[RMDB]
RNA sequence: GGGAACGACUCGAGUAGAGUCGAAAAGAUAUGGACCUUCCGAUAAGCUAUGUACGUCGGAAACGACGUACCGCUAGCUUUUGACGGAACGUCCUAAGUCAAACGUGUAUACUUCGGUAUACACGAAGCCUGAAUGGAAGUUCGCUUCCAUUCAGGCAAAAGAAACAACAACAACAAC
Reactivity to DMS in 0.01 (KOAc 150mM, MgCl2 10mM, bicine 150mM(pH8.5), 24C), signal-to-noise 2, nucleotides 027 to 126: g010a060u010a300u010g000g000a000c000c040u000u010c000c010g010a170u000a010a030g000c000u000a010u000g000u010a010c000g010u000c000g000g010a100a160a200c000g010a000c010g000u000a010c000c000g000c000u000a000g010c010u000u000u020u000g000a190c100g000g000a010a000c250g030u000c000c000u010a070a100g020u000c030a110a120a240c040g020u000g010u000a000u000a010c000u000u010c130g010g000u000a000u000a010c010a010c000g000a050a060
Reactivity to 2A3 in 0.01 (KOAc 150mM, MgCl2 10mM, bicine 150mM(pH8.5), 24C), signal-to-noise 2, nucleotides 027 to 126: g030a010u090a040u170g000g000a000c010c010u000u000c000c010g020a050u010a080a010g000c010u030a010u300g000u000a010c000g010u010c000g020g020a040a050a010c020g000a000c000g000u000a000c000c000g050c010u000a000g000c000u020u020u020u040g080a010c010g020g000a020a000c010g010u000c000c010u010a140a010g090u040c090a110a020a070c020g000u010g010u010a000u000a020c000u040u070c300g100g000u000a000u000a000c000a000c000g010a020a000